[RMDB]
RNA sequence: GGGAACGACUCGAGUAGAGUCGAAAAGAUAUGGAAAGAUUCGAAAUCAACCUGGGCUACCGUUUGACGCAGUCGGAAACGACUGCCGAGGUAGCCAGGUUGAUUGACGAAGAUCUUUCCUAAGUCACCUAAAUCUUAGGUUCGCCUAAGAUUUAGGAAAAGAAACAACAACAACAAC
Reactivity to 2A3 in 0.01 (KOAc 150mM, MgCl2 10mM, bicine 150mM(pH8.5), 24C), signal-to-noise 2, nucleotides 027 to 126: g010a020u080a050u120g000g000a010a000a010g010a040u030u000c000g020a060a000a000u000c000a000a020c010c000u090g100g300g000c010u010a000c020c000g090u160u300u300g060a050c040g010c000a000g000u010c010g030g020a120a090a100c020g000a000c000u000g000c000c000g000a000g000g000u010a000g000c000c000a000g000g000u000u000g010a000u000u010g000a010c000g020a020a010g110a020u010c000u000u010u020c000c010u010a110a040g050u020c020a070
Reactivity to DMS in 0.01 (KOAc 150mM, MgCl2 10mM, bicine 150mM(pH8.5), 24C), signal-to-noise 5, nucleotides 027 to 126: g000a060u000a300u010g000g000a010a010a010g020a030u000u000c010g000a300a020a010u010c000a000a000c010c000u000g020g030g030c010u000a000c000c000g030u010u000u010g020a170c300g000c000a010g020u000c000g020g020a140a120a200c010g010a020c000u000g010c000c010g000a030g010g020u000a010g010c000c000a000g000g000u000u000g000a000u000u010g000a160c110g010a050a070g000a060u000c000u000u000u000c000c000u010a030a120g000u000c040a260

This 177-nucleotide RNA was probed chemically with 2A3 and DMS. For 2A3 the reverse transcriptase was SuperScript II with manganese. Conditions: 150 mM KOAc, 10 mM MgCl2 and 150 mM bicine (pH 8.5), 24 C. The 2A3 profile rests on 8,338 reads.